[RMDB]
RNA sequence: GGGAACGACUCGAGUAGAGUCGAAAAGCGCAAAUCCACAAACGCCAACGAUGAGCGUUUCGCUGUAGCCGCUUAAGGCAACAGCCGGGGCCGCGUGAGCCCUGUUACCAAAGACGGCUGGCGGGGGUAAUUACUUAUUGCUUCGGCAAUAAGUAAAUCAAUCAAACUAGUUCGCUAGUUUGAUUGAAAAAGAAACAACAACAACAAC
Reactivity to DMS in 0.01 (KOAc 150mM, MgCl2 10mM, bicine 150mM(pH8.5), 24C), signal-to-noise 3, nucleotides 027 to 156: g020c010g010c030a050a110a090u010c020c020a080c050a040a250a060c010g020c010c000a080a190c050g020a130u000g010a230g020c020g020u000u000u000c030g000c010u030g000u000a060g020c010c020g030c180u000u010a100a210g010g020c020a040a020c000a020g010c040c030g010g010g020g010c020c010g020c160g000u000g010a100g010c000c010c010u000g010u000u010a110c030c020a040a140a180g020a100c060g020g000c060u000g020g020c020g020g000g030g010g020u010a050a120u000u000a010c000u000u000a010u000u000g010c010u000u020c300g100g010c000a010a010u000a010a010g020u010a000a020a200
Reactivity to 2A3 in 0.01 (KOAc 150mM, MgCl2 10mM, bicine 150mM(pH8.5), 24C), signal-to-noise 4, nucleotides 027 to 156: g060c030g010c050a070a070a020u060c050c020a080c060a110a090a010c020g000c010c010a130a060c140g140a180u190g030a060g040c000g000u020u060u080c040g000c010u020g040u090a030g010c000c000g050c130u190u170a120a110g010g010c010a030a010c010a030g020c000c030g000g000g000g010c010c020g050c060g050u100g060a020g010c000c000c000u010g040u050u060a040c000c010a020a030a070g060a030c020g030g040c060u030g010g010c010g010g010g000g000g000u030a060a090u060u010a010c000u000u000a000u000u000g010c000u020u050c160g090g000c000a000a000u000a000a010g000u000a000a000a010